[RMDB]
RNA sequence: GGGAACGACUCGAGUAGAGUCGAAAACGAAUUCUUUAAAAGGCACAGUAUAUCUAUCGUAGGUUUCGUGAAAGACUUUCUGGUCUCUCUCUUCAGAUCAAUAACCUCGGGAGUUAAGCAGUUCUCGAAUGUUAAUGGUUUUCGAACCAUUAACAUUAAAAGAAACAACAACAACAAC
Reactivity to DMS in 0.01 (KOAc 150mM, MgCl2 10mM, bicine 150mM(pH8.5), 24C), signal-to-noise 9, nucleotides 027 to 126: c040g010a070a060u000u000c020u000u000u010a070a080a120a100g010g010c090a060c080a070g010u010a180u010a060u010c050u000a070u010c090g020u000a040g000g000u000u000u000c050g010u000g000a080a100a180g000a050c030u000u000u000c170u010g020g010u000c010u000c080u000c100u010c090u000u000c090a040g010a040u000c030a040a050u000a050a060c300c010u000c030g000g000g000a110g020u000u000a070a120g010c150a110g000u000u000c000u000c020g010
Reactivity to 2A3 in 0.01 (KOAc 150mM, MgCl2 10mM, bicine 150mM(pH8.5), 24C), signal-to-noise 7, nucleotides 027 to 126: c010g020a030a080u150u130c020u100u280u210a100a170a050a040g090g000c050a040c030a100g120u120a120u030a030u270c050u020a080u110c040g090u060a020g010g030u020u030u050c040g000u040g070a100a060a030g000a020c010u040u110u020c050u110g020g020u020c000u000c010u020c000u000c000u090u120c040a020g000a070u030c020a030a110u060a050a040c000c000u010c010g010g030g010a090g020u070u030a050a020g040c060a030g020u030u010c010u000c010g020